[RMDB]
RNA sequence: GGGAACGACUCGAGUAGAGUCGAAAAGGUUGGGGUUAUAAGCUCGGUGAAGUCGUGCGAAGCACACCCUAACGCUUAAUGGCGAGGAAAGAUUCGUAGAGGUACGGGUUGUGUGUGACAGUGCGGGCUCUUCCAACCGAUUCGUCGGUUGGAAGAGAAAAGAAACAACAACAACAAC
Reactivity to DMS in 0.01 (KOAc 150mM, MgCl2 10mM, bicine 150mM(pH8.5), 24C), signal-to-noise 1, nucleotides 027 to 126: g000g000u060u010g030g000g030g020u010u010a060u050a110a130g010c000u020c040g000g000u040g020a100a030g000u000c010g000u070g010c020g000a100a230g020c030a140c060a020c040c000c020u000a060a020c050g020c000u000u060a160a010u070g000g050c000g000a110g000g000a080a230a220g000a060u000u000c000g030u040a020g080a110g020g000u020a050c100g000g000g000u010u030g010u010g000u000g020u000g000a030c070a300g010u010g010c040g000g000g000
Reactivity to 2A3 in 0.01 (KOAc 150mM, MgCl2 10mM, bicine 150mM(pH8.5), 24C), signal-to-noise 2, nucleotides 027 to 126: g000g050u000u020g020g020g000g020u050u000a100u000a240a050g030c020u030c030g000g110u160g100a220a050g040u080c050g010u030g000c040g010a000a000g000c010a000c000a000c020c000c000u010a000a000c020g060c050u080u130a030a030u170g000g010c000g060a010g020g030a090a070a040g010a060u100u000c000g000u000a020g000a050g300g080u000a040c040g000g000g060u020u040g020u000g010u000g040u010g040a020c090a120g020u020g020c020g030g010g000